The record gives the reactivity of an RNA of 207 nucleotides to 2A3 and DMS.
The 2A3 profile rests on 4,367 reads.
For DMS the reverse transcriptase was MarathonRT.
The RNA was probed in 150 mM KOAc, 10 mM MgCl2 and 150 mM bicine (pH 8.5) at 24 C.
The data come from the RNA Mapping Database (RMDB), library VIROID.

RNA sequence: GGGAACGACUCGAGUAGAGUCGAAAAUCUUCGCUUGCGAUCCUCGUCACGUGAGGCUAAUCUCCGACGCUCGGCUUCCUCUUCUCCCGACAAUUGUUUCCCUUGGGCCUCGAGCUGUUUCUUCUUGUUCUCGAGCAUGCACCUUCGACGGUGUUCAGUUAUGUUUAACGUUCGCGUUAAACAUAACAAAAGAAACAACAACAACAAC
Reactivity to 2A3 in 0.01 (KOAc 150mM, MgCl2 10mM, bicine 150mM(pH8.5), 24C), signal-to-noise 4, nucleotides 027 to 156: u040c020u090u090c040g020c070u030u090g030c020g050a090u090c010c040u040c040g070u040c060a050c120g110u110g040a020g020g030c030u080a060a090u080c030u010c050c040g060a070c050g030c040u030c040g040g000c010u050u030c020c010u060c000u130u000c040u060c000c000c000g040a040c070a110a200u100u090g060u070u030u020c000c020c000u030u060g090g040g000c010c010u010c020g010a020g000c040u030g040u040u060u040c020u080u030c030u060u140g070u190u020c020u010c030g010a010g000c020a060u100g000c000a030c010c010u120u240c120g090a060c080g020g000u010g000u030u070c010a020
Reactivity to DMS in 0.01 (KOAc 150mM, MgCl2 10mM, bicine 150mM(pH8.5), 24C), signal-to-noise 2, nucleotides 027 to 156: u000c030u000u000c040g030c050u000u000g000c060g000a100u010c040c040u000c050g020u020c050a100c120g050u010g000a110g010g000c100u000a130a130u000c020u000c020c020g030a120c080g000c040u010c040g010g010c020u000u010c020c010u000c020u010u000c080u010c030c030c000g020a070c070a050a150u000u010g010u000u000u000c020c030c020u010u000g030g010g020c060c010u010c050g020a070g040c040u010g000u010u000u000c010u010u000c070u010u000g000u010u000c060u010c040g030a110g020c060a100u000g060c010a050c010c030u010u000c220g030a170c170g010g010u010g010u010u020c060a100